[RMDB]
RNA sequence: GGGAACGACUCGAGUAGAGUCGAAAAAUAUGUUUUUAGCACCAAAAUGCGUUUCUGAUAGUAUACUUUUAAUGCAGAUGUAUAUACCUGAUAUGGUCAUGUUAGUAUGUAAGUAAGCUAUCUGGGUGUCUGCCUAUUAGAGUGAUGUGUGUGUAUAGGAUACCUACCUAUUCGUAGGUAGGUAUCCAAAAGAAACAACAACAACAAC
Reactivity to DMS in 0.01 (KOAc 150mM, MgCl2 10mM, bicine 150mM(pH8.5), 24C), signal-to-noise 2, nucleotides 027 to 156: a120u000a100u000g030u000u000u000u000u000a130g020c050a050c010c010a050a080a070a120u010g010c020g010u000u000u000c050u010g010a130u000a080g020u000a230u000a020c030u000u000u000u000a030a120u010g020c010a090g000a070u010g010u000a070u000a060u010a070c030c040u010g010a080u030a110u000g040g000u010c040a070u000g020u000u000a100g020u000a040u000g010u000a020a080g010u000a050a300g010c010u000a030u000c030u000g030g010g020u000g010u000c040u000g030c010c060u000a090u000u000a060g010a130g030u000g000a100u000g020u000g010u010g000u000g020u000a110u020a190
Reactivity to 2A3 in 0.01 (KOAc 150mM, MgCl2 10mM, bicine 150mM(pH8.5), 24C), signal-to-noise 3, nucleotides 027 to 156: a000u170a070u040g080u030u030u030u050u100a020g030c040a010c020c020a010a030a080a100u080g020c020g010u020u090u030c010u020g050a010u020a000g060u100a030u050a220c050u100u130u060u160a100a110u070g000c020a020g020a050u030g070u070a060u020a000u080a210c010c030u040g060a080u080a050u230g010g000u040c040a020u050g030u050u030a090g020u080a090u130g070u010a010a090g040u040a110a020g030c010u020a010u060c020u060g000g000g010u010g040u000c020u030g020c000c010u060a090u060u040a040g030a010g070u060g020a060u020g080u020g000u000g000u000g080u050a020u160a140